[RMDB]
The record gives the reactivity of an RNA of 177 nucleotides to 2A3 and DMS. Values cover nucleotides 27 to 126. The data come from the RNA Mapping Database (RMDB), library OK1LIB. The 2A3 profile rests on 1,433 reads.
RNA sequence: GGGAACGACUCGAGUAGAGUCGAAAAGGACUGGAGCGGUCGGUGAUGUGACCACGAAAGGGGACAAUAUUUUAGUGUACGUCGCUAGCUACAGCGAAGUUGAUAAUCUCAGCAAAGGGUUAGUGGAAGUUCCGAUUACUUUCGAGUAAUCGGAACUAAAAGAAACAACAACAACAAC
Reactivity to 2A3 in 0.01 (KOAc 150mM, MgCl2 10mM, bicine 150mM(pH8.5), 24C), signal-to-noise 3, nucleotides 027 to 126: g050g030a030c060u090g070g010a100g040c030g040g090u080c010g000g030u060g020a080u020g110u080g040a070c000c050a030c060g080a050a000a010g070g000g000g010a000c030a100a010u070a100u150u240u050u090a130g020u070g050u140a020c060g000u040c030g040c010u010a050g000c020u060a100c000a010g010c050g060a160a000g060u040u010g070a060u070a160a130u040c060u020c080a060g000c030a030a150a100g050g000g000u070u060a010g000u050g010g060a030
Reactivity to DMS in 0.01 (KOAc 150mM, MgCl2 10mM, bicine 150mM(pH8.5), 24C), signal-to-noise 2, nucleotides 027 to 126: g000g000a140c010u000g000g010a250g010c050g000g010u000c080g010g020u010g020a100u000g000u020g010a060c050c050a050c060g040a070a100a060g010g000g000g050a080c120a050a090u040a030u030u010u030u040a040g040u020g010u010a050c100g050u000c000g020c010u000a030g020c050u000a050c110a010g000c020g020a090a050g000u000u000g000a050u010a070a100u010c140u020c040a120g000c020a040a060a080g000g000g030u000u010a040g000u000g000g000a150
The RNA was probed in 150 mM KOAc, 10 mM MgCl2 and 150 mM bicine (pH 8.5) at 24 C.